An RNA of 177 nucleotides, treated with DMS and 2A3 and read out base by base. For 2A3 the reverse transcriptase was SuperScript II with manganese. For 2A3, 4,828 sequencing reads were counted.
RNA sequence: GGGAACGACUCGAGUAGAGUCGAAAAUGAAAGGAACCCCCAAUCCUAAUAAAACAAAAUAAGGGCAAAAUACAAUAACAGCAUCGACAAAGGGGGAAAUUAAUUGUCGAAAUAAAAAUAAAAUAAAGUAGUCAUCUAUGUUCGUGUAGAUGGUUGCAAAAGAAACAACAACAACAAC
Reactivity to DMS in 0.01 (KOAc 150mM, MgCl2 10mM, bicine 150mM(pH8.5), 24C), signal-to-noise 4, nucleotides 027 to 126: u030g010a130a120a100g000g010a050a070c020c000c000c000c020a160a210u010c000c000u000a100a090u000a090a110a110a120c040a060a070a080a090u040a030a070g040g000g020c110a050a040a070a100u020a060c140a120a080u030a030a090c160a100g000c060a090u020c010g000a010c020a010a050a090g000g000g000g000g010a010a060a070u060u030a030a110u010u010g000u010c010g020a020a100a070u010a020a040a050a060a060u080a030a060a040a110u070a070a030a130
Reactivity to 2A3 in 0.01 (KOAc 150mM, MgCl2 10mM, bicine 150mM(pH8.5), 24C), signal-to-noise 2, nucleotides 027 to 126: u110g040a130a070a020g140g050a120a120c040c050c030c010c000a050a060u010c000c010u050a160a140u090a080a300a010a000c050a010a130a010a040u130a060a010g000g020g000c000a030a070a090a000u190a070c000a010a060u030a060a040c000a040g100c040a080u030c010g000a000c000a000a000a030g020g000g010g000g000a020a020a020u060u030a000a040u040u020g010u010c000g040a100a000a000u150a010a020a010a010a000u240a050a080a010a010u230a050a020a060
For DMS the reverse transcriptase was MarathonRT. High 2A3 reactivity points to a flexible backbone, as in loops and unpaired stretches. Conditions: 150 mM KOAc, 10 mM MgCl2 and 150 mM bicine (pH 8.5), 24 C.